[RMDB]
RNA sequence: GGGAACGACUCGAGUAGAGUCGAAAAGGACUCGAUCCAUCUGCCGCCGCCGUUGCGUUUGUGAAGCGCAUGGCCGCGGCACAUCCGACCUUCGCGGGCAAGGUGCAGCUACAUGUCGGCGCAGCCAAGCGAAAGCGAUAUUCGUAUCGCUUUCGCUAAAAGAAACAACAACAACAAC
Reactivity to 2A3 in 0.01 (KOAc 150mM, MgCl2 10mM, bicine 150mM(pH8.5), 24C), signal-to-noise 1, nucleotides 027 to 126: g020g020a050c060u020c160g070a140u080c030c020a070u010c000u020g000c010c000g000c000c000g000c000c000g110u060u080g000c030g020u030u070u110g300u110g200a090a000g000c000g010c010a010u010g010g000c030c000g040c020g020g110c000a000c000a020u030c010c030g040a040c000c000u070u030c030g000c050g020g000g000c050a070a040g020g010u030g020c090a050g030c010u060a020c040a100u150g020u070c020g000g050c030g000c040a000g000c010c030a020
Reactivity to DMS in 0.01 (KOAc 150mM, MgCl2 10mM, bicine 150mM(pH8.5), 24C), signal-to-noise 2, nucleotides 027 to 126: g010g000a080c080u010c130g010a150u000c050c060a100u000c100u000g000c020c000g010c000c270g060c010c040g020u000u000g040c000g010u000u000u020g040u030g010a090a040g010c000g060c000a020u000g000g020c050c210g000c000g060g040c000a000c080a020u000c080c050g010a080c060c000u000u000c090g000c060g020g030g000c080a080a040g000g030u000g010c030a090g020c070u000a050c110a060u010g000u000c050g000g010c040g030c080a100g000c060c070a100